[RMDB]
RNA sequence: GGGAACGACUCGAGUAGAGUCGAAAAGAUAUGGAUCUAUGGGAGGAACUACGUUCUCCAAUCGGAAACGAUUGAGAACGCCUUUGAUCAUAGAUCCUAAGUCAAAAGUAGUCCUUCGGGACUACAACAGUACGUUAUUCUUCGGAAUAACGUACUGAAAAGAAACAACAACAACAAC
Reactivity to 2A3 in 0.01 (KOAc 150mM, MgCl2 10mM, bicine 150mM(pH8.5), 24C), signal-to-noise 5, nucleotides 027 to 126: g020a020u060a030u140g000g000a000u000c000u000a010u010g020g030g010a050g060g010a100a070c180u300a100c300g000u000u000c000u010c050c020a000a010u000c000g020g050a040a040a030c000g010a000u010u000g000a000g000a000a000c000g170c000c010u300u170u070g060a050u100c000a000u000a000g000a000u000c000c000u000a050a010g020u010c020a030a050a030a150g010u010a000g000u000c010c000u010u050c300g110g000g010a000c000u000a000c000a000a010
Reactivity to DMS in 0.01 (KOAc 150mM, MgCl2 10mM, bicine 150mM(pH8.5), 24C), signal-to-noise 6, nucleotides 027 to 126: g000a050u000a300u010g000g000a000u010c000u000a000u000g000g010g010a220g000g000a070a030c130u020a240c020g000u000u000c000u000c120c170a000a000u000c000g010g000a100a070a170c010g010a000u000u000g000a020g000a010a010c000g000c040c060u000u000u010g010a220u010c010a010u000a010g010a000u000c000c000u010a010a080g010u010c020a090a080a100a140g010u000a000g010u000c000c000u000u010c220g020g000g000a010c000u000a010c000a070a120

Structure probing data (2A3 and DMS) for a 177-nucleotide construct. In probing experiments dimethyl sulfate is read out at A N1 and C N3, which are open when not base-paired. Source: RMDB library TTRDEL, as collected in RNAgym. For DMS, 6,830 sequencing reads were counted.